[RMDB]
RNA sequence: GGGAACGACUCGAGUAGAGUCGAAAACAUGAAGAUCGGUAACUUUGAGCUGCCAAGCCGUGCGUAUGUUGGCCGUUUCAACUUCAAAGGGGUCGAUCAGGGUAAGCGCAUCGGCGAGUUAUCCGGACAGCCAUAAUACUUUCGAGUAUUAUGGCUGAAAAGAAACAACAACAACAAC
Reactivity to DMS in 0.01 (KOAc 150mM, MgCl2 10mM, bicine 150mM(pH8.5), 24C), signal-to-noise 6, nucleotides 027 to 126: c080a120u010g000a100a090g020a040u010c030g010g010u000a040a060c020u010u010u010g000a060g000c050u010g020c180c170a090a100g010c030c010g020u000g020c090g020u010a080u000g010u000u000g010g010c020c080g010u000u000u000c070a030a060c080u000u010c060a030a050a050g010g000g010g010u000c020g010a020u000c040a120g000g000g000u010a040a080g000c010g000c020a100u010c150g020g010c020g010a060g000u000u000a040u000c000c000g000g010a300
Reactivity to 2A3 in 0.01 (KOAc 150mM, MgCl2 10mM, bicine 150mM(pH8.5), 24C), signal-to-noise 4, nucleotides 027 to 126: c040a050u140g100a110a050g030a090u070c030g010g010u020a020a030c010u040u060u090g020a030g020c030u030g030c040c010a010a010g050c030c020g070u090g040c060g060u140a080u280g150u080u050g030g000c020c000g040u070u100u150c070a100a070c040u100u050c020a010a000a060g040g000g000g010u010c030g010a010u070c040a010g040g000g010u070a060a020g000c010g000c040a100u180c170g110g010c030g020a040g050u030u030a070u060c020c000g000g030a030